[RMDB]
RNA sequence: GGGAACGACUCGAGUAGAGUCGAAAACCCGUUUUGUUCGCAAAACGGGACUCAUCUUUGCUUGGCAGCAUAGCAGGUGUUGGCUGGACUGCUGGCUAAUCCUUGGAGGCAGUUUCGACUGCCUCAAGCGUAGUACUUCAUUCGUGAAGUACUACGCAAAAGAAACAACAACAACAAC
Reactivity to 2A3 in 0.01 (KOAc 150mM, MgCl2 10mM, bicine 150mM(pH8.5), 24C), signal-to-noise 3, nucleotides 027 to 126: c000c000c000g000u000u000u000u010g020u010u080c160g000c080a010a000a000a000c010g000g000g050a070c010u030c060a140u000c090u100u120u110g030c020u060u170g080g000c010a010g000c010a060u130a070g010c020a060g070g120u130g100u300u190g180g000c010u010g020g030a100c030u040g020c000u010g060g060c010u030a050a080u120c030c040u010u110g180g000a000g000g000c000a010g000u030u030u170c150g060a030c000u030g090c000c000u000c000a000a000
Reactivity to DMS in 0.01 (KOAc 150mM, MgCl2 10mM, bicine 150mM(pH8.5), 24C), signal-to-noise 3, nucleotides 027 to 126: c010c000c000g000u000u000u000u010g010u000u020c180g010c000a020a010a000a010c000g000g010g010a110c070u000c100a090u010c100u000u000u000g000c010u010u010g020g020c060a040g020c070a100u010a020g010c010a030g010g010u010g000u000u000g000g020c020u000g000g010a160c040u030g010c000u000g010g000c020u000a060a060u010c100c030u010u020g010g010a020g000g010c000a000g000u000u000u020c180g010a040c000u000g010c000c000u000c000a000a030
This 177-nucleotide RNA was probed chemically with 2A3 and DMS. The reactions ran in a buffer of 150 mM KOAc, 10 mM MgCl2 and 150 mM bicine (pH 8.5), at 24 C. High DMS reactivity at an A or C suggests that its Watson-Crick edge is free. For DMS the reverse transcriptase was MarathonRT. It was measured as part of the RMDB library M2PK50. Values cover nucleotides 27 to 126.